[RMDB]
RNA sequence: GGGAACGACUCGAGUAGAGUCGAAAAACCAAAGUGUGGAGAUCGAAGAUGAUUAGAGACCAUUGUAGUCCACACUGCAAACGAUGACACCCAUGAAUUGGGGAUCUUAUGGGCCGGCCUGCGGCAGGGUUUACCCUGUGUCAGCACCGCGCCCGCUACAACCUCUCGGGUUCGCCCGAGAGGUUGUAAAAGAAACAACAACAACAAC
Reactivity to 2A3 in 0.01 (KOAc 150mM, MgCl2 10mM, bicine 150mM(pH8.5), 24C), signal-to-noise 2, nucleotides 027 to 156: a000c010c000a040a030a020g020u030g010u020g020g010a040g040a160u180c020g020a060a040g090a060u000g010a000u020u080a080g070a020g000a160c020c020a030u010u300g000u140a000g020u020c000c000a000c000a020c020u050g030c050a040a120a090c080g050a040u080g030a030c010a060c060c000c010a030u110g290a050a190u300u050g000g000g000g000a010u020c030u000u200a270u300g000g000g000c010c010g180g000c200c290u300g000c000g000g000c000a000g140g070g000u180u170u300a300c000c000c000u000g020u000g050u100c000a030g000c000a000c000c000g000c000g000c000c000c000g010c000u010